[RMDB]
RNA sequence: GGGAACGACUCGAGUAGAGUCGAAAAGUCCCAUACUUCGGUAUGGGACAAAUAAACUUGACUAAAGCCUGUCAACAAUCACCACAGGCAAAGUGGUGUAAAAAACUAACUUGUUCGCAAGUUAGAACGUUAGAUAUUAGUUCGCUAAUAUCUAACGAAAAGAAACAACAACAACAAC
Reactivity to DMS in 0.01 (KOAc 150mM, MgCl2 10mM, bicine 150mM(pH8.5), 24C), signal-to-noise 7, nucleotides 027 to 126: g000u000c000c000c000a010u000a000c000u000u010c200g030g010u000a000u000g000g000g020a000c000a000a040a060u000a060a070a110c120u000u010g000a030c010u000a040a040a060g020c000c010u000g000u000c020a020a040c300a100a090u010c010a010c000c000a010c000a110g020g020c280a040a070a060g010u000g000g000u000g000u010a000a030a050a090a050a100c000u000a010a000c000u000u000g010u000u020c200g010c000a010a010g000u000u000a000g000a050a110
Reactivity to 2A3 in 0.01 (KOAc 150mM, MgCl2 10mM, bicine 150mM(pH8.5), 24C), signal-to-noise 9, nucleotides 027 to 126: g010u000c000c000c000a000u000a000c000u020u060c210g090g000u000a000u000g000g000g000a000c000a000a000a000u020a010a050a020c050u030u040g020a000c010u040a020a020a060g200c010c020u030g020u020c010a020a030c020a080a140u090c000a000c010c000a010c010a050g300g000c050a110a040a000g000u000g010g000u020g020u070a060a110a010a010a000a000c000u000a000a000c000u010u010g030u100u080c230g020c090a010a000g000u000u010a010g020a080a010
Structure probing data (DMS and 2A3) for a 177-nucleotide construct. The data come from the RNA Mapping Database (RMDB), library M2PK50. For DMS the reverse transcriptase was MarathonRT. Conditions: 150 mM KOAc, 10 mM MgCl2 and 150 mM bicine (pH 8.5), 24 C. 2A3 adducts were read by reverse transcription with SuperScript II with manganese.